[RMDB]
RNA sequence: GGGAACGACUCGAGUAGAGUCGAAAAGGCAGCGAAUUCGUUCGCUGCCAAUACAGGUCGUGGAGCCGGCUUCACGGCGCACGUCGAUGACGCCCGGGCCGGAGAAUCCAGAUUUCGAUCUGGAUAACAGAAGGACAUAGUUCGCUAUGUCCUUCUGAAAAGAAACAACAACAACAAC
Reactivity to 2A3 in 0.01 (KOAc 150mM, MgCl2 10mM, bicine 150mM(pH8.5), 24C), signal-to-noise 2, nucleotides 027 to 126: g000g000c010a000g000c020g010a010a010u090u150c200g060u100u020c000g010c010u010g000c000c000a000a000u010a000c000a000g010g030u000c010g020u020g000g030a050g040c020c010g000g000c010u070u040c030a000c020g030g000c090g000c080a050c000g110u110c080g240a300u210g020a040c000g030c000c000c000g010g150g000c000c000g020g010a020g070a020a020u020c000c000a000g030a040u060u070u120c190g030a000u010c000u000g000g010a010u040a040a030
Reactivity to DMS in 0.01 (KOAc 150mM, MgCl2 10mM, bicine 150mM(pH8.5), 24C), signal-to-noise 4, nucleotides 027 to 126: g000g010c000a000g020c010g010a020a020u000u000c210g010u000u000c000g020c000u010g000c000c000a010a020u000a080c120a050g010g000u010c010g020u000g000g020a050g010c020c010g000g000c030u000u000c020a060c050g000g000c000g020c060a180c030g010u000c070g000a160u010g010a060c010g020c010c000c050g010g000g000c000c010g000g000a090g010a110a060u000c000c000a020g000a040u000u010u010c160g000a020u000c000u010g010g000a010u000a070a200